[RMDB]
This 177-nucleotide RNA was probed chemically with DMS and 2A3. The RNA was probed in 150 mM KOAc, 10 mM MgCl2 and 150 mM bicine (pH 8.5) at 24 C. DMS adducts were read by reverse transcription with MarathonRT. Source: RMDB libraries RFM100 and RFMREP, as collected in RNAgym.
RNA sequence: GGGAACGACUCGAGUAGAGUCGAAAAGCUUAUCAGCCGAGGGUUAGCCGAUCCUAAGGCCCGUCGUAAUUCGAGCGGGUCAAAAGGGAAACUGGUUAAUAUUCCAGUGCCACCGUACAUUGAAAGUCGAGACUUCAUAAUUCGUUAUGAAGUCUCGAAAAGAAACAACAACAACAAC
Reactivity to DMS in 0.01 (KOAc 150mM, MgCl2 10mM, bicine 150mM(pH8.5), 24C), signal-to-noise 2, nucleotides 027 to 126: g000c050u000u050a020u010c090a150g000c000c040g010a110g000g000g000u020u000a030g010c010c030g020a190u000c000c000u010a160a090g000g000c000c000c000g020u000c020g000u020a130a170u060u070c030g010a100g020c010g000g000g000u010c000a000a000a070a110g000g020g000a060a170a020c010u020g040g000u000u000a040a080u010a120u020u000c000c010a030g000u000g000c060c000a070c060c030g050u010a060c130a090u000u000g000a020a080a090g000u030
Reactivity to 2A3 in 0.01 (KOAc 150mM, MgCl2 10mM, bicine 150mM(pH8.5), 24C), signal-to-noise 6, nucleotides 027 to 126: g000c010u050u090a020u110c030a030g060c010c030g060a090g000g080g000u020u040a020g010c010c000g020a060u040c000c000u040a090a050g010g000c000c000c000g020u040c010g040u070a140a220u160u200c020g000a050g080c000g030g000g010u000c010a060a050a000a080g040g000g000a070a090a010c030u040g000g030u070u040a080a040u050a120u170u000c010c000a000g020u020g070c020c000a030c000c020g020u070a030c050a140u130u210g090a130a080a010g080u040